[RMDB]
RNA sequence: GGGAACGACUCGAGUAGAGUCGAAAAAGCUUCACCAUCCUUCUGCAGGGAAGCCUUCUCCAAGAUCCAUCCUUAGGCCAGAUCCCCUGUCAUGGACAUUGGUACUCCCAUCUCCUUGGUGAUUCACAUCACGCCUCUGCUUAUGGCUUGGUGUCCACACCGUGAGGGUAUUCGUACCCUCACGGUGAAAAGAAACAACAACAACAAC
Reactivity to 2A3 in 0.01 (KOAc 150mM, MgCl2 10mM, bicine 150mM(pH8.5), 24C), signal-to-noise 3, nucleotides 027 to 156: a000g050c050u170u080c060a090c080c020a080u080c000c020u190u140c050u100g050c040a040g010g000g000a040a030g010c000c020u060u060c040u050c020c010a020a020g020a150u080c030c010a040u080c050c000u090u110a030g040g000c040c010a050g010a300u130c070c000c030c000u030g000u090c040a070u060g030g000a010c030a050u030u070g050g000u060a050c070u130c050c020c010a020u060c040u070c040c010u030u090g000g010u020g010a110u130u080c040a020c030a030u030c000a010c020g020c030c010u090c050u140g120c100u240u200a070u240g020g000c020u000u010g020g000u020g000u000c010c000a010